[RMDB]
RNA sequence: GGGAACGACUCGAGUAGAGUCGAAAAGAGGACGGACUACUGGCUGUUUCCGGAGUAGGACGUCCGAAGCAGAGGCUGCCACCGGUCUGCAAACACGACAGGGCUGUUUUGUCACCUGGAGUGGAGAGGGUUCCAUCUGGUUCGCCAGGUGGAACCCAAAAGAAACAACAACAACAAC
Reactivity to 2A3 in 0.01 (KOAc 150mM, MgCl2 10mM, bicine 150mM(pH8.5), 24C), signal-to-noise 4, nucleotides 027 to 126: g180a040g000g000a010c000g000g000a010c000u000a000c010u040g240g090c030u080g090u120u050u060c050c040g030g010a020g000u000a000g010g000a000c000g000u000c000c010g000a020a000g030c000a000g000a000g030g000c020u020g010c000c000a010c000c000g010g020u000c000u000g000c000a000a030a010c010a000c020g020a010c010a000g010g050g000c040u030g120u130u170u090u090g130u130c030a070c080c000u000g000g000a020g000u040g010g030a060g050a040
Reactivity to DMS in 0.01 (KOAc 150mM, MgCl2 10mM, bicine 150mM(pH8.5), 24C), signal-to-noise 2, nucleotides 027 to 126: g000a180g000g000a010c000g010g000a000c000u010a000c000u000g020g060c090u020g020u000u020u000c050c060g000g040a030g010u010a010g000g000a060c000g020u010c000c000g010a090a030g000c030a030g010a080g000g000c060u000g000c010c000a070c060c010g020g020u010c000u000g000c020a140a100a070c000a040c040g000a160c010a030g000g000g000c080u000g010u000u020u020u020g010u030c050a130c010c010u010g000g030a230g020u000g000g020a090g040a180